[RMDB]
RNA sequence: GGGAACGACUCGAGUAGAGUCGAAAAGGACUGCGCAUUCCGGCAACAUCAGCAGAGAGCCCGCUAUACGUGACGGAUUGGCUGAAGCGUACAGAAAUAUUGAGCCUCCUGCAAGAGGCAGCCAAGCAAAACGUACGUGAGUUCGCUCACGUACGAAGCCGUUAAUAUGCUUCGGCAUAUUAACGGCAAAAGAAACAACAACAACAAC
Reactivity to 2A3 in 0.01 (KOAc 150mM, MgCl2 10mM, bicine 150mM(pH8.5), 24C), signal-to-noise 2, nucleotides 027 to 156: g080g000a010c000u030g010c070g000c070a060u120u000c030c010g030g000c000a030a000c010a130u140c010a000g000c050a010g110a000g040a000g100c000c040c030g000c010u030a030u050a150c130g010u040g060a000c010g090g010a130u090u080g070g000c000u030g000a000a030g010c020g020u000a010c020a000g140a020a090a010u210a130u180u120g020a020g000c020c000u050c010c040u070g050c000a130a010g010a000g030g000c010a010g050c000c010a020a020g030c030a020a160a130a080c000g000u000a000c000g010u020g010a020g000u020u100c180g000c030u010c000a000c000g000u000a000c000g000a000a000